RNA sequence: GGGAACGACUCGAGUAGAGUCGAAAAGAUAUGGAGCUAUGCUUCAACAGCUAUGACUUCGGAAACGAAGUAUAGACAUGAAGGUAGCUCCUAAGUCAAAGGUUCACGUUCUUCGGAACGUGAACCACACUAUGGAGGACUUCGGUCCUCCAUAGUGAAAAGAAACAACAACAACAAC
Reactivity to 2A3 in 0.01 (KOAc 150mM, MgCl2 10mM, bicine 150mM(pH8.5), 24C), signal-to-noise 5, nucleotides 027 to 126: g010a000u010a000u070g010g010a010g010c010u020a040u300g300c020u070u040c100a300a250c140a160g010c000u010a010u070g300a210c000u010u000c000g000g000a000a020a000c000g000a000a000g010u010a010u000a000g040a050c130a300u300g000a000a000g000g010u000a000g020c000u010c000c000u010a010a000g000u010c030a070a080a120g010g000u000u000c000a000c000g000u010u000c010u050u130c300g150g000a010a000c000g000u010g000a000a000c000c000a010
Reactivity to DMS in 0.01 (KOAc 150mM, MgCl2 10mM, bicine 150mM(pH8.5), 24C), signal-to-noise 4, nucleotides 027 to 126: g010a010u000a080u000g000g000a010g000c000u000a000u000g020c000u000u000c000a180a120c300a200g010c000u000a010u000g000a030c000u000u000c000g010g000a020a020a040c000g010a020a010g000u010a000u000a000g000a050c140a100u010g000a030a010g000g000u000a000g000c010u000c000c000u000a010a050g000u000c000a120a140a120g010g010u000u000c000a010c010g010u000u010c000u000u010c250g040g010a010a000c000g030u000g010a000a000c010c000a020
Structure probing data (2A3 and DMS) for a 177-nucleotide construct.
It was measured as part of the RMDB library TTRDES.
The DMS profile rests on 6,214 reads.
For DMS the reverse transcriptase was MarathonRT.